[RMDB]
RNA sequence: GGGAACGACUCGAGUAGAGUCGAAAAUUUGUUCAGACUAGUUCUGUAUGAGCAAAACAGUUUUCGCAAAAAUACCCUGAGUUUCUUACUACCCAUCUAGCACAAAUAUUGCUGAUGGUAAUUUCCGCUGUUAAUUUCUAUUCGUAGAAAUUAACAGAAAAGAAACAACAACAACAAC
Reactivity to DMS in 0.01 (KOAc 150mM, MgCl2 10mM, bicine 150mM(pH8.5), 24C), signal-to-noise 5, nucleotides 027 to 126: u000u010u000g010u000u000c100a030g010a020c010u000a140g010u000u000c040u000g010u010a130u040g000a160g000c050a030a040a020a050c050a050g000u000u000u000u010c080g020c030a010a050a050a070a110u010a050c000c000c010u010g020a130g020u000u000u000c030u020u000a130c130u000a130c300c020c010a010u000c000u030a010g040c010a050c210a080a100a120u030a080u020u010g000c000u000g000a020u000g000g000u000a030a060u000u000u010c090c170g020
Reactivity to 2A3 in 0.01 (KOAc 150mM, MgCl2 10mM, bicine 150mM(pH8.5), 24C), signal-to-noise 7, nucleotides 027 to 126: u020u020u000g000u000u030c020a000g010a030c010u070a110g040u060u050c030u030g070u060a210u280g180a130g080c010a010a020a010a030c010a010g000u000u010u040u040c030g000c020a000a040a020a030a030u110a140c000c000c000u020g030a010g040u000u020u000c010u040u080a120c060u050a060c020c020c000a010u000c100u180a010g020c050a030c030a090a240a160u260a130u190u110g000c000u000g000a010u010g010g000u000a030a040u020u060u030c050c040g030

The record gives the reactivity of an RNA of 177 nucleotides to DMS and 2A3. The RNA was probed in 150 mM KOAc, 10 mM MgCl2 and 150 mM bicine (pH 8.5) at 24 C. For DMS the reverse transcriptase was MarathonRT.